The record gives the reactivity of an RNA of 177 nucleotides to DMS and 2A3. The data come from the RNA Mapping Database (RMDB), library TTRDEL. Conditions: 150 mM KOAc, 10 mM MgCl2 and 150 mM bicine (pH 8.5), 24 C. 2A3 adducts were read by reverse transcription with SuperScript II with manganese.
RNA sequence: GGGAACGACUCGAGUAGAGUCGAAAAGAUAUGGAUGCUGUGGAGGAUACGUGGAGCCGAGUCGGAAACGAUAUCUCCACGAUCCGUUGAAACAGCAUCCUAAGUCAAAGAACCCUUCGGGGUUCAACACUAUGUGUGUGUUCGCACACACAUAGUGAAAAGAAACAACAACAACAAC
Reactivity to DMS in 0.01 (KOAc 150mM, MgCl2 10mM, bicine 150mM(pH8.5), 24C), signal-to-noise 5, nucleotides 027 to 126: g000a030u000a300u010g000g000a010u000g000c010u000g010u000g000g010a070g000g000a000u010a080c010g040u000g000g000a010g020c300c200g010a140g030u000c000g000g010a080a060a150c020g020a060u000a090u000c000u000c000c010a010c000g000a020u000c000c000g020u000u000g000a220a080a020c000a010g000c000a000u000c000c000u010a010a060g010u000c030a100a110a140g010a010a010c000c000c010u000u010c180g010g000g010g010u010u000c000a070a140
Reactivity to 2A3 in 0.01 (KOAc 150mM, MgCl2 10mM, bicine 150mM(pH8.5), 24C), signal-to-noise 3, nucleotides 027 to 126: g020a010u050a030u130g000g010a000u000g000c010u010g000u020g000g040a030g020g010a020u160a300c000g000u000g000g020a020g060c110c100g090a070g120u020c010g020g040a080a030a000c000g000a010u020a080u100c000u010c010c000a000c010g010a000u000c000c010g010u150u000g000a010a010a000c000a000g000c000a000u000c000c000u000a000a000g000u000c010a000a050a170g000a010a000c020c010c000u020u040c300g030g000g000g000u020u000c010a010a000